[RMDB]
RNA sequence: GGGAACGACUCGAGUAGAGUCGAAAAAGGGAAAGAUCUUGAAGGUUGCCACAUGUGCCAAUCAGGAUCCACUUGAGGCAACAACUGGACUUGUUCCACUGUUCGGAAUUGACGUCUGGGAGCACGACCGCACUAAUGCAUUCGUGCAUUAGUGCGGAAAAGAAACAACAACAACAAC
Reactivity to DMS in 0.01 (KOAc 150mM, MgCl2 10mM, bicine 150mM(pH8.5), 24C), signal-to-noise 2, nucleotides 027 to 126: a080g000g010g010a070a070a080g000a040u000c000u010u010g010a170a080g000g010u010u010g020c010c020a190c110a030u000g020u010g000c090c020a090a120u010c150a120g020g010a220u000c200c020a040c030u000u000g000a050g000g010c010a010a010c020a100a110c030u000g000g000a060c030u000u000g050u000u000c000c000a100c160u010g020u010u020c070g000g010a020a080u010u000g010a030c200g000u000c000u000g000g000g000a080g000c070a030c070g000a170
Reactivity to 2A3 in 0.01 (KOAc 150mM, MgCl2 10mM, bicine 150mM(pH8.5), 24C), signal-to-noise 2, nucleotides 027 to 126: a000g060g000g010a040a090a000g040a110u030c010u060u050g070a120a040g090g000u080u030g000c000c000a040c010a040u070g020u010g020c000c030a070a170u230c150a110g090g030a050u050c030c060a030c000u040u030g020a010g030g030c010a010a010c010a000a090c030u010g000g010a000c000u040u120g050u100u000c040c030a070c100u170g130u190u160c090g010g040a070a050u060u150g050a100c080g030u000c020u020g070g010g050a050g060c000a010c090g080a080